Chemical mapping of a 207-nucleotide RNA with 2A3 and DMS. The 2A3 profile rests on 2,278 reads. The data come from the RNA Mapping Database (RMDB), library M2RFPK. The DMS profile rests on 3,371 reads. Conditions: 150 mM KOAc, 10 mM MgCl2 and 150 mM bicine (pH 8.5), 24 C.
RNA sequence: GGGAACGACUCGAGUAGAGUCGAAAACGCAGAGGGUUCUGAUAACAAAGAACCUAGAUAGCCGUAUCGGUAUUAUAGGAUGUAGUCGGUGAGCCGGAAUGCCUGCAUCGUAAGCCUAUAAGUAAAUUUAAGUGUAAUCACUUCGGUGAUUACACAAUCAGAGUAUACGGUUCGCCGUAUACUCUGAAAAAGAAACAACAACAACAAC
Reactivity to 2A3 in 0.01 (KOAc 150mM, MgCl2 10mM, bicine 150mM(pH8.5), 24C), signal-to-noise 4, nucleotides 027 to 156: c070g010c040a020g060a100g120g000g030u000u000c020u020g090a110u110a240a050c030a040a140a010g000a000a000c010c000u020a010g010a080u070a020g040c030c030g050u100a100u130c050g000g040u090a050u180u020a030u070a050g030g040a050u030g060u090a020g080u080c010g020g010u040g050a020g050c030c020g030g110a110a000u100g040c020c000u020g050c010a010u020c010g030u030a010a050g000c000c020u060a070u010a090a050g060u070a040a090a260u160u220u150a180a020g000u000g000u000a000a000u000c000a000c000u010u050c160g040g000u010g000a000u000u000a000c000a000c000a000a010
Reactivity to DMS in 0.01 (KOAc 150mM, MgCl2 10mM, bicine 150mM(pH8.5), 24C), signal-to-noise 2, nucleotides 027 to 156: c080g040c050a090g000a300g010g010g010u000u000c000u010g010a180u020a130a230c300a110a160a030g030a000a000c000c000u030a070g020a180u000a170g000c040c040g020u000a090u010c040g040g010u000a050u000u000a040u010a050g000g010a100u000g030u000a070g040u010c040g010g050u000g020a100g010c040c050g010g000a070a130u000g010c040c020u000g030c010a050u010c020g040u000a130a080g010c030c030u000a030u000a030a090g000u000a020a080a170u000u000u000a050a200g010u000g020u000a020a020u000c000a020c010u000u010c300g060g000u000g000a030u000u000a010c000a010c000a050a070